This 177-nucleotide RNA was probed chemically with DMS. For DMS the reverse transcriptase was MarathonRT. DMS (dimethyl sulfate) methylates the pairing face of unpaired adenines and cytosines. It was measured as part of the RMDB library TTRINS.

RNA sequence: GGGAACGACUCGAGUAGAGUCGAAAAGAUAUGGAUAGGUUGGCAUGGAGAGCACAUGCCGUUUGACGCUGUUCGGAAACGAACAGCCGAGGCAUGGCUCGUUGAAAUGCCAACCUAUCCUAAGUCACUCAAUAGUCGGGUUCGCCCGACUAUUGAGAAAAGAAACAACAACAACAAC
Reactivity to DMS in 0.01 (KOAc 150mM, MgCl2 10mM, bicine 150mM(pH8.5), 24C), signal-to-noise 1, nucleotides 027 to 126: g010a020u010a300u000g000g000a000u000a010g020g000u000u000g010g000c000a050u000g030g010a070g010a020g010c010a090c010a000u000g020c000c010g070u010u010u000g000a210c300g000c000u000g010u020u010c000g000g010a090a140a210c010g000a000a030c000a000g000c000c010g000a010g020g030c000a000u010g000g000c000u000c000g000u030u010g000a180a090a000u000g010c030c000a010a010c000c010u040a000u000c010c000u020a010a030g030u000c000a260